[RMDB]
RNA sequence: GGGAACGACUCGAGUAGAGUCGAAAAGAUAUGGACACUUCGACGAUCUAAUCUCUCUCGGAAACGAGAGAGAGUUAGGGAGAAGGUCCUAAGUCAAAACUUUAACAUACUUCGGUAUGUUAAAGAACCACUGUGGUUAGUUCGCUAACCACAGUGGAAAAGAAACAACAACAACAAC
Reactivity to DMS in 0.01 (KOAc 150mM, MgCl2 10mM, bicine 150mM(pH8.5), 24C), signal-to-noise 1, nucleotides 027 to 126: g010a050u000a300u000g000g010a010c000a150c020u000u000c000g000a090c190g000a030u010c000u000a020a070u000c000u000c000u000c020u000c010g010g000a020a070a190c000g030a000g000a000g000a010g020a000g000u000u000a020g000g000g000a060g000a010a010g000g030u000c000c000u020a010a100g010u000c020a120a040a130a080c000u010u000u000a000a000c000a010u000a000c010u000u000c180g010g020u000a000u000g000u000u000a000a000a000g000a090a280
Reactivity to 2A3 in 0.01 (KOAc 150mM, MgCl2 10mM, bicine 150mM(pH8.5), 24C), signal-to-noise 1, nucleotides 027 to 126: g010a000u030a000u100g020g000a060c120a120c300u000u010c020g300a300c000g020a090u020c000u030a030a000u020c000u020c000u000c000u000c000g040g040a090a070a080c030g020a000g000a000g000a000g000a000g010u050u100a010g010g000g000a040g000a000a000g040g020u000c000c000u020a150a020g080u030c010a020a050a050a180c010u000u000u060a000a010c010a010u000a010c020u020u090c260g120g000u000a000u000g010u000u000a010a000a000g000a020a010
An RNA of 177 nucleotides, treated with DMS and 2A3 and read out base by base. Source: RMDB library TTRDEL, as collected in RNAgym. 2A3 is a SHAPE reagent: it acylates the 2'-hydroxyl of flexible nucleotides of all four kinds. Conditions: 150 mM KOAc, 10 mM MgCl2 and 150 mM bicine (pH 8.5), 24 C. DMS adducts were read by reverse transcription with MarathonRT.